[RMDB]
RNA sequence: GGGAACGACUCGAGUAGAGUCGAAAAAUUGAUAAACGGCACCUAUAAGGUGGUGCCGAACCAGCGUGACCUACCAACACGCAACGAGCAGUCUGGUAUGACAGCAAACCUAUGGUAAACAAGAUAACACUAGUCAUCAGUUCGCUGAUGACUAGUGAAAAGAAACAACAACAACAAC
Reactivity to 2A3 in 0.01 (KOAc 150mM, MgCl2 10mM, bicine 150mM(pH8.5), 24C), signal-to-noise 3, nucleotides 027 to 126: a000u050u050g030a030u150a100a110a030c000g000g000c010a000c000c040u100a120u050a300a120g300g000u090g000g000u010g000c000c000g000a000a000c010c000a010g000c020g000u000g020a120c000c030u020a040c020c010a030a020c010a000c010g010c030a010a040c040g070a020g020c020a010g010u000c000u100g090g120u270a100u180g020a010c020a020g020c000a050a020a050c020c020u100a120u090g040g010u090a020a080a040c050a030a050g060a100u120a110a010
Reactivity to DMS in 0.01 (KOAc 150mM, MgCl2 10mM, bicine 150mM(pH8.5), 24C), signal-to-noise 3, nucleotides 027 to 126: a040u000u000g010a060u020a140a120a140c020g000g000c020a010c000c000u000a150u020a100a130g030g020u010g000g000u000g000c000c020g000a040a040c100c060a160g030c020g040u000g000a040c050c000u000a020c040c000a190a060c010a010c000g000c040a100a130c150g000a090g010c010a020g010u000c020u030g020g030u020a100u000g000a040c050a040g000c030a040a060a110c010c030u000a080u010g000g030u000a040a050a100c270a050a100g010a100u010a040a160

Chemical mapping of a 177-nucleotide RNA with 2A3 and DMS. For DMS the reverse transcriptase was MarathonRT. It was measured as part of the RMDB library M2PK90. 2A3 adducts were read by reverse transcription with SuperScript II with manganese. The 2A3 profile rests on 3,380 reads. Reactivities are given for positions 27 through 126.